[RMDB]
RNA sequence: GGGAACGACUCGAGUAGAGUCGAAAAGGUGAUAAUGAGUUAUGUGUGUUUAGUAUAAUUGUUUGCCUAUGCAUUUAUCAGAAGCAGCUCAAAUUCUCAAGCUCAUAGGUAGCAGGCUAGUCAAGUGAUUUCAAGAGCUCAGAAGCAAGUCACUAGAUACCCAUAAUAUGUUCGCAUAUUAUGGGUAAAAAGAAACAACAACAACAAC
Reactivity to 2A3 in 0.01 (KOAc 150mM, MgCl2 10mM, bicine 150mM(pH8.5), 24C), signal-to-noise 5, nucleotides 027 to 156: g010g020u040g030a060u040a130a080u090g020a030g050u060u060a110u090g060u000g030u000g040u050u080u110a100g020u060a070u050a140a070u060u040g050u050u130u080g000c000c010u050a040u050g000c020a030u050u110u140a160u150c040a010g050a140a020g020c030a010g030c010u030c070a090a110a100u170u030c050u000c050a030a030g000c000u000c050a050u040a050g000g050u010a020g000c010a020g030g040c020u040a020g050u050c010a070a020g030u020g100a070u040u070u060c090a120a030g020a010g100c000u010c030a040g010a080a000g010c030a010a030g020u040c000a010c030u020a020g000a110
Reactivity to DMS in 0.01 (KOAc 150mM, MgCl2 10mM, bicine 150mM(pH8.5), 24C), signal-to-noise 4, nucleotides 027 to 156: g010g010u000g010a060u000a080a100u000g000a130g010u000u000a060u000g020u010g020u000g020u000u000u000a110g010u010a090u010a080a110u000u010g030u000u010u000g030c060c010u000a080u010g020c030a100u000u000u000a070u000c060a130g010a100a100g000c050a070g000c020u000c020a050a060a170u000u000c030u000c030a040a170g010c040u000c010a060u000a060g000g020u010a050g020c050a090g010g020c050u000a060g000u000c040a060a090g020u010g010a070u000u000u000c030a060a140g010a110g000c020u010c060a110g010a130a150g010c050a050a080g000u010c010a040c020u000a080g010a300
The record gives the reactivity of an RNA of 207 nucleotides to 2A3 and DMS. The data come from the RNA Mapping Database (RMDB), library OK3TST.